[RMDB]
RNA sequence: GGGAACGACUCGAGUAGAGUCGAAAACUUCUUGCAAGUCGUGGAAUUCCAAUUCAUGUGGUUGCCAAUACUGUAAGAACCACCAGGCUAAAAGAUUCACCAACCAGAAAACGGGGCACAAGAUUCCGGUGGACGGACGUUUCGACGUCCGUCCACCAAAAGAAACAACAACAACAAC
Reactivity to 2A3 in 0.01 (KOAc 150mM, MgCl2 10mM, bicine 150mM(pH8.5), 24C), signal-to-noise 1, nucleotides 027 to 126: c000u040u000c000u000u050g000c000a260a000g000u000c010g000u030g010g020a050a080u230u240c020c060a020a000u160u300c040a110u180g000u040g180g010u010u120g090c060c000a020a050u140a130c040u000g000u120a040a040g000a020a020c030c000a000c000c030a050g010g000c040u070a040a040a040a040g000a190u110u000c000a000c090c000a070a130c000c000a000g160a050a130a040a000c040g000g000g070g000c020a020c000a190a150g060a140u190u030c000c010

Record summary
Source: RMDB library OK1LIB, as collected in RNAgym. An RNA of 177 nucleotides, treated with 2A3 and read out base by base. Conditions: 150 mM KOAc, 10 mM MgCl2 and 150 mM bicine (pH 8.5), 24 C. For 2A3 the reverse transcriptase was SuperScript II with manganese.